RNA sequence: GGGAACGACUCGAGUAGAGUCGAAAAGUACGUAGAGUGUCGGCAAGCUCUAUCUAUGGACACUUACGAAGGGUUUUGGUUGUUUUGUAUCUCAAGCCGACUUUGAGUAUUUGAGGAAAAUACGACAUGAAUCCUGUGACGUUCGCGUCACAGGAAAGGACAUAAAAUUCUUCGGAAUUUUAUGUCCAAAAGAAACAACAACAACAAC
Reactivity to DMS in 0.01 (KOAc 150mM, MgCl2 10mM, bicine 150mM(pH8.5), 24C), signal-to-noise 1, nucleotides 027 to 156: g030u000a030c080g010u010a030g020a070g030u000g010u000c030g020g030c080a150a300g010c030u020c030u000a050u000c080u000a060u000g010g010a100c050a040c030u010u010a080c080g000a120a130g000g000g010u010u010u000u000g030g020u010u000g030u000u000u000u000g000u000a160u000c070u020c050a060a080g030c000c010g000a060c020u020u010u000g010a300g020u000a050u000u010u000g000a090g050g010a130a030a040a070u000a070c020g010a150c110a080u000g020a080a200u000c010c000u000g000u000g000a010c030g000u000u000c300g020c010g030u000c000a020c020a030g000g000a000a000a090
Reactivity to 2A3 in 0.01 (KOAc 150mM, MgCl2 10mM, bicine 150mM(pH8.5), 24C), signal-to-noise 2, nucleotides 027 to 156: g060u040a040c030g000u030a010g000a010g090u060g020u090c060g030g020c060a070a040g000c030u030c000u100a120u040c030u060a100u070g080g050a020c040a010c140u120u150a060c130g060a040a080g040g000g010u040u050u120u140g020g000u020u030g020u000u020u040u020g050u020a100u020c030u030c090a020a100g000c000c000g020a020c000u040u010u060g040a040g010u030a060u050u090u080g030a060g010g140a000a100a100a000u100a050c070g020a040c020a070u100g090a130a070u020c000c000u000g000u000g000a010c020g000u050u010c210g010c020g110u000c000a000c010a020g000g030a000a000a000
Annotation: Chemical mapping of a 207-nucleotide RNA with DMS and 2A3. The RNA was probed in 150 mM KOAc, 10 mM MgCl2 and 150 mM bicine (pH 8.5) at 24 C. The 2A3 profile rests on 969 reads. Source: RMDB library M2RFPK, as collected in RNAgym. For 2A3 the reverse transcriptase was SuperScript II with manganese. As a SHAPE reagent, 2A3 marks flexible, mostly unpaired nucleotides at the ribose 2'-OH.